RNA sequence: GGGAACGACUCGAGUAGAGUCGAAAAUCUACAUAGUUCGCUAUGUAGAAAAACGCGCACGCGCGCGCACGCGCUCUCUCUCGCACACGCACGCGCACGCAAAAACGUUGCGGUUCGCCGCAACGAAUCUAGUAUUCCUGUUCGCAGGAAUACUAGAAAAAGAAACAACAACAACAAC
Reactivity to 2A3 in 0.01 (KOAc 150mM, MgCl2 10mM, bicine 150mM(pH8.5), 24C), signal-to-noise 3, nucleotides 027 to 126: u010c000u000a000c000a000u010a010g020u040u060c210g020c100u010a000u020g000u010a010g030a010a000a010a000a010c070g020c010g010c010a030c100g020c000g000c010g000c010g000c010a010c060g010c000g020c020u030c000u000c000u000c010u020c100g000c010a020c000a010c130g000c000a010c010g000c000g000c000a000c010g000c020a030a050a020a000a010c010g000u000u010g000c000g000g070u020u040c230g020c060c000g000c010a000a000c000g000a000a020
Reactivity to DMS in 0.01 (KOAc 150mM, MgCl2 10mM, bicine 150mM(pH8.5), 24C), signal-to-noise 5, nucleotides 027 to 126: u000c000u010a010c000a010u010a010g000u000u010c230g020c000u000a010u010g000u000a010g000a010a060a050a100a100c180g000c020g030c080a070c070g010c010g020c020g020c000g020c030a130c160g020c000g020c150u000c060u000c070u010c040u000c020g000c030a100c180a090c050g010c000a020c010g000c020g010c030a060c020g000c030a060a070a070a080a120c020g000u000u000g010c000g000g010u000u010c210g020c010c000g010c010a000a000c000g010a060a050

Source: RMDB library M2PK50, as collected in RNAgym. This 177-nucleotide RNA was probed chemically with 2A3 and DMS. Values cover nucleotides 27 to 126. The RNA was probed in 150 mM KOAc, 10 mM MgCl2 and 150 mM bicine (pH 8.5) at 24 C.